This 207-nucleotide RNA was probed chemically with 2A3. For 2A3 the reverse transcriptase was SuperScript II with manganese. It was measured as part of the RMDB library VIROID. The RNA was probed in 150 mM KOAc, 10 mM MgCl2 and 150 mM bicine (pH 8.5) at 24 C.
RNA sequence: GGGAACGACUCGAGUAGAGUCGAAAAAGUUGACCUCCCUCGGCACGAGGACGUGCCUGAUUUUGAGUGGGGGAGGAUGUCACGGACAAAUUCCGUGGCCGUGUUAGGCCAACAUUGAAGAGCGUACCUAGCUGCGUUUCAACCUGCACGGGUUGGGCACGUACGUGUGGUUCGCCACACGUACGUGAAAAGAAACAACAACAACAAC
Reactivity to 2A3 in 0.01 (KOAc 150mM, MgCl2 10mM, bicine 150mM(pH8.5), 24C), signal-to-noise 2, nucleotides 027 to 156: a000g070u060u040g060a070c010c000u000c070c000c000u000c030g000g000c000a000c020g070a150g170g240a190c060g010u000g000c000c000u040g090a140u000u090u180u300g050a080g000u240g000g000g000g000g000a000g000g000a000u000g010u010c000a000c010g030g000a030c100a180a110a090u130u000c000c000g000u050g000g020c010c010g030u040g040u050u200a050g000g000c070c190a040a000c080a090u060u130g050a110a080g050a030g070c000g000u020a050c000c060u020a060g080c170u040g000c010g020u010u110u130c020a000a000c000c000u040g030c050a010c060g040g020g000u050u050g020g000g040